[RMDB]
RNA sequence: GGGAACGACUCGAGUAGAGUCGAAAACGGGAGCUGUGCCGCCAGACACGCGUUUUCGAUCGGGUUCAGGUCGGCGUGCAGGAGGCGGACGGCCCACGUCUCGAUGUCGGACGACACGGCAUCGCGCAAGGCGGCGUCCGGCCCGCGAGCGCGUGAGGGACGGGGAAAAGUUCGCUUUUCCCCGUCCAAAAGAAACAACAACAACAAC
Reactivity to 2A3 in 0.01 (KOAc 150mM, MgCl2 10mM, bicine 150mM(pH8.5), 24C), signal-to-noise 3, nucleotides 027 to 156: c010g000g000g030a060g070c000u000g040u240g070c020c020g000c040c020a020g130a070c010a010c000g000c040g030u070u110u100u270c060g000a050u030c060g070g010g070u300u250c060a060g080g020u070c020g030g000c000g010u010g000c010a040g010g110a060g020g020c010g010g000a000c000g050g010c000c000c000a110c000g000u000c000u000c000g030a020u010g010u040c000g040g040a050c030g040a090c100a020c150g130g010c010a070u090c020g000c000g000c030a160a080g160g020c020g020g000c010g040u080c020c000g030g120c000c020c130g090c000g010a020g030c150g000c030g010u020g020a060g000
Chemical mapping of a 207-nucleotide RNA with 2A3. Conditions: 150 mM KOAc, 10 mM MgCl2 and 150 mM bicine (pH 8.5), 24 C. The 2A3 profile rests on 1,231 reads. 2A3 adducts were read by reverse transcription with SuperScript II with manganese. 2A3 is a SHAPE reagent: it acylates the 2'-hydroxyl of flexible nucleotides of all four kinds.